Notes
Chemical mapping of a 177-nucleotide RNA with DMS and 2A3. For DMS, 11,373 sequencing reads were counted. DMS adducts were read by reverse transcription with MarathonRT. It was measured as part of the RMDB library 15KREP.
RNA sequence: GGGAACGACUCGAGUAGAGUCGAAAAGCAAUAUUAUUGCUACACGUCUAAGGACACUUUAGAUGAUAUCUUACAACAGGCUAAUAAGUCUGUUGGUAUUAUAUCUAUGCCUUUGGGAUAUGUGUCUCAGUAUUAAUAUGUUCGCAUAUUAAUACUGAAAAGAAACAACAACAACAAC
Reactivity to DMS in 0.01 (KOAc 150mM, MgCl2 10mM, bicine 150mM(pH8.5), 24C), signal-to-noise 6, nucleotides 027 to 126: g010c000a010a010u000a170u000u010a080u000u000g010c010u000a090c080a070c090g010u010c010u000a030a020g000g010a030c020a040c200u000u000u000a070g010a090u000g000a030u000a010u000c030u000u000a040c010a000a000c000a010g010g010c000u000a150a140u000a070a050g020u000c000u000g000u000u000g010g000u000a000u000u000a020u000a010u000c010u000a080u010g010c010c010u000u000u010g020g020g010a040u000a020u000g010u000g000u000c070u000
Reactivity to 2A3 in 0.01 (KOAc 150mM, MgCl2 10mM, bicine 150mM(pH8.5), 24C), signal-to-noise 9, nucleotides 027 to 126: g010c010a010a020u120a100u300u090a070u080u060g000c000u030a020c040a010c050g020u000c010u030a030a020g020g010a010c010a020c060u070u070u080a040g010a050u080g000a000u020a000u010c020u010u030a010c000a000a000c000a000g000g000c000u040a110a080u130a300a070g000u000c000u000g000u000u000g000g000u010a000u010u010a010u000a000u000c020u020a040u090g060c000c010u050u090u140g110g000g010a030u070a030u160g010u000g020u000c010u000